[RMDB]
RNA sequence: GGGAACGACUCGAGUAGAGUCGAAAAAGUUAGGUUCGCUAUGGUGCAACUCUUUAAGGCAAUAACGAACUAAUUCUAAGCAAGUAAUGGAGAAAUGCCAGGGUCACUAUCUAGCCAUAAUGGUGCUGUAAGUGACUUAGAUUCGUCUAAGUCACAACGCAUUCUAUGAGUUCGCUCAUAGAAUGCGAAAAGAAACAACAACAACAAC
Reactivity to DMS in 0.01 (KOAc 150mM, MgCl2 10mM, bicine 150mM(pH8.5), 24C), signal-to-noise 1, nucleotides 027 to 156: a130g000u000u000a050g000g000u010u010c010g070c010u000a010u000g000g020u000g090c040a080a110c100u020c120u010u000u010a040a090g010g060c020a100a040u010a020a000c020g020a030a040c010u000a000a130u000u000c040u000a100a100g040c100a090a060g020u030a090a040u010g030g010a080g010a100a060a080u000g020c030c030a060g050g000g030u010c020a060c040u010a110u000c030u010a050g000c000c010a020u000a050a120u000g030g000u000g000c020u000g030u000a010a140g000u020g020a010c000u020u030a000g010a050u000u020c240g010u010c010u000a010a020g000u000c000a010c030a060a090
Reactivity to 2A3 in 0.01 (KOAc 150mM, MgCl2 10mM, bicine 150mM(pH8.5), 24C), signal-to-noise 3, nucleotides 027 to 156: a000g090u060u060a050g000g040u010u030c030g010c030u020a040u070g090g040u080g050c030a130a100c110u080c020u160u240u140a140a040g020g000c010a060a050u080a090a000c050g020a020a030c000u040a010a020u120u020c020u070a060a010g060c020a000a050g040u100a070a040u160g040g020a080g030a100a130a030u100g000c040c010a040g000g020g000u030c020a010c050u020a080u120c060u060a040g010c000c000a040u090a180a050u110g030g020u050g060c010u010g030u050a100a080g000u000g000a000c000u020u010a000g000a000u030u020c090g010u000c140u000a000a000g000u000c000a010c010a020a010

Structure probing data (DMS and 2A3) for a 207-nucleotide construct. The 2A3 profile rests on 1,822 reads. Conditions: 150 mM KOAc, 10 mM MgCl2 and 150 mM bicine (pH 8.5), 24 C. Source: RMDB library M2RFPK, as collected in RNAgym.